[RMDB]
RNA sequence: GGGAACGACUCGAGUAGAGUCGAAAAGGGUUUGAGCCAUCGCCCGAAUAAGAUGGGUGAUACAAGUCGACAUUGUACGCGACGUAGUACGUACUCAUUAGUGCGAAAGCACGGUUAGUCCGACUAGGCAGGGACGAUCUUCUGUCAAUACUUAGAAAGUAAAUAUCAGGUUCGCCUGAUAUUUACUAAAAGAAACAACAACAACAAC
Reactivity to DMS in 0.01 (KOAc 150mM, MgCl2 10mM, bicine 150mM(pH8.5), 24C), signal-to-noise 4, nucleotides 027 to 156: g020g030g020u000u010u010g000a130g010c050c020a080u010c050g040c020c020c010g010a070a140u000a070a120g010a110u000g000g010g020u010g050a070u000a060c040a070a080g020u000c020g020a060c030a140u000u000g010u000a090c090g000c020g010a100c050g040u000a160g020u000a030c010g010u000a030c020u010c090a130u010u000a080g020u010g000c000g000a130a120a210g030c020a020c000g000g020u000u000a090g020u000c010c000g010a130c010u000a080g000g020c060a080g000g020g010a080c060g010a080u000c060u000u000c050u010g000u000c020a050a130u010a060c050u010u000a100g000a120a140
Reactivity to 2A3 in 0.01 (KOAc 150mM, MgCl2 10mM, bicine 150mM(pH8.5), 24C), signal-to-noise 7, nucleotides 027 to 156: g050g010g020u060u100u120g070a030g030c010c020a010u010c010g030c000c010c020g030a110a120u210a100a070g080a070u140g010g020g000u030g040a030u070a080c070a140a050g000u030c020g030a060c060a110u140u250g050u160a030c060g010c020g030a020c020g000u010a010g000u020a090c030g000u020a020c000u000c030a020u010u090a110g010u000g000c010g040a090a020a000g000c000a000c000g020g010u010u030a010g010u000c040c000g000a010c010u020a020g030g000c030a010g020g000g060a060c070g030a080u040c050u190u030c040u060g070u030c020a070a140u090a150c040u080u100a050g070a110a120